This 207-nucleotide RNA was probed chemically with 2A3.
The reactions ran in a buffer of 150 mM KOAc, 10 mM MgCl2 and 150 mM bicine (pH 8.5), at 24 C.
RNA sequence: GGGAACGACUCGAGUAGAGUCGAAAAACACAACCACAGAAGCAAACAUGAAGGAAGACGCUCACCACAUCCACAGCAUCGCACAGCCGCUCUCGGGGGAUAUGCUCAGUGAUGGACGGACACUGAUUCUGCAGGAGCAGCACAGCCUUCAAACCCAGACGAUACUCGUAUUCGUACGAGUAUCGUCAAAAGAAACAACAACAACAAC
Reactivity to 2A3 in 0.01 (KOAc 150mM, MgCl2 10mM, bicine 150mM(pH8.5), 24C), signal-to-noise 2, nucleotides 027 to 156: a000c080a000c040a050a110c070c020a010c050a080g090a000a000g090c120a150a040a120c050a150u090g020a020a010g050g000a010a040g040a010c030g040c010u020c020a040c010c000a060c000a010u000c000c050a040c030a020g020c000a010u070c030g000c060a080c040a070g020c050c040g090c030u080c010u040c040g030g000g010g000g040a040u050a040u090g020c040u020c030a000g000u010g120a040u070g000g040a010c020g010g030a020c020a000c080u060g010a120u100u020c040u040g010c000a090g000g060a020g050c000a000g040c000a010c000a020g030c000c000u000u130c010a010a020a040c000c000c030a000